[RMDB]
RNA sequence: GGGAACGACUCGAGUAGAGUCGAAAACAUCAUCCCUUCGGGGAUGAUGAAAGAUCGAAAGAUCAGGCUAACCGUAAUAAGCCAAAAUACGAGCGAAACGCAAAAGACCUGUGUUCGCACAGGUCAACUCUAUAUCUCUCUUCGGAGAGAUAUAGAGAAAAGAAACAACAACAACAAC
Reactivity to 2A3 in 0.01 (KOAc 150mM, MgCl2 10mM, bicine 150mM(pH8.5), 24C), signal-to-noise 7, nucleotides 027 to 126: c000a000u010c000a000u000c000c000c000u010u040c200g030g000g000g000a000u000g000a000u000g000a000a000a010g010a010u010c010g020a060a030a030g010a000u010c020a010g020g000c010u040a060a080c040c030g070u050a050a090u120a160a030g000c000c000a110a050a020a020u160a050c070g010a050g070c060g080a220a130a030c100g010c070a040a100a030a070g000a000c000c000u010g000u010g030u050u070c220g000c090a000c000a000g000g000u000c000a000a000
Reactivity to DMS in 0.01 (KOAc 150mM, MgCl2 10mM, bicine 150mM(pH8.5), 24C), signal-to-noise 6, nucleotides 027 to 126: c000a010u000c000a000u000c000c000c000u000u010c210g030g010g010g010a000u000g000a000u000g000a040a090a090g010a010u000c000g010a150a100a160g010a010u000c010a150g000g000c020u010a070a170c090c040g010u000a030a070u000a100a070g010c020c020a090a050a050a090u010a050c100g010a120g010c060g000a050a060a070c110g020c140a060a070a120a080g010a020c010c000u000g020u000g000u000u010c180g010c000a000c010a000g000g000u000c010a010a040
This 177-nucleotide RNA was probed chemically with 2A3 and DMS.
In probing experiments dimethyl sulfate is read out at A N1 and C N3, which are open when not base-paired.
The DMS profile rests on 7,647 reads.
It was measured as part of the RMDB library M2PK50.